RNA sequence: GGGAACGACUCGAGUAGAGUCGAAAAGUACUCAUGCGAUCAUCACGAUCGACUCAUGCUGUAGAUCACUAGGGUACUACGUACACGCUAGCAUGUGUGAUCUCUGAUCCUGUCCAUGUCUAGAGGAUGUUUGCGUAUCAUUCGUGAUACGCAAACAAAAAGAAACAACAACAACAAC
Reactivity to DMS in 0.01 (KOAc 150mM, MgCl2 10mM, bicine 150mM(pH8.5), 24C), signal-to-noise 3, nucleotides 027 to 126: g020u020a050c020u010c030a180u010g040c050g000a020u000c020a130u010c010a060c180g010a060u000c060g010a090c090u010c070a060u000g020c100u010g010u000a080g000a060u000c040a060c040u000a240g000g010g000u010a040c020u000a080c120g020u000a090c080a130c100g020c040u000a020g010c050a040u000g000u000g000u000g010a030u000c010u000c180u010g020a060u000c030c080u000g000u020c120c000a030u000g020u000c030u000a080g000a130g000g000a150
Reactivity to 2A3 in 0.01 (KOAc 150mM, MgCl2 10mM, bicine 150mM(pH8.5), 24C), signal-to-noise 3, nucleotides 027 to 126: g030u030a010c000u000c020a040u140g040c040g030a010u020c010a050u140c090a020c100g030a040u030c030g130a060c030u030c040a090u050g020c050u090g080u150a040g000a090u070c020a000c110u040a050g010g000g080u020a020c020u010a040c190g060u080a020c060a000c030g100c050u050a030g030c040a030u070g040u050g050u040g070a040u020c140u000c080u130g010a010u010c020c020u040g000u000c040c010a040u060g030u080c020u060a050g010a070g200g050a090
Source information: An RNA of 177 nucleotides, treated with DMS and 2A3 and read out base by base. Conditions: 150 mM KOAc, 10 mM MgCl2 and 150 mM bicine (pH 8.5), 24 C. For 2A3 the reverse transcriptase was SuperScript II with manganese. DMS (dimethyl sulfate) methylates the pairing face of unpaired adenines and cytosines. 2A3 is a SHAPE reagent: it acylates the 2'-hydroxyl of flexible nucleotides of all four kinds.